[RMDB]
RNA sequence: GGGAACGACUCGAGUAGAGUCGAAAAUCACUAACAGCUCUAAUUUAAGCUCUGGUUUGUAUCAAAUGCAAGCUCAAAGCGUGUUGUUUGACAAUUCCAAUUUAAGCGUUUCAGUGGGGACAAGCAGAAUGGGAGCAUGAUUCGUCAUGCUCCCAUUAAAAGAAACAACAACAACAAC
Reactivity to DMS in 0.01 (KOAc 150mM, MgCl2 10mM, bicine 150mM(pH8.5), 24C), signal-to-noise 1, nucleotides 027 to 126: u000c020a060c170u000a020a070c040a080g050c010u010c020u020a110a150u010u010u000a100a110g020c030u000c040u000g000g000u000u000u000g020u000a080u000c170a030a100a200u000g020c000a040a000g010c010u010c010a000a050a040g020c040g000u000g010u010u000g030u000u000u040g000a080c080a090a080u000u000c040c030a080a160u010u000u000a050a110g000c070g010u000u000u000c060a040g040u000g000g000g010g010a060c060a030a030g010c110a100g000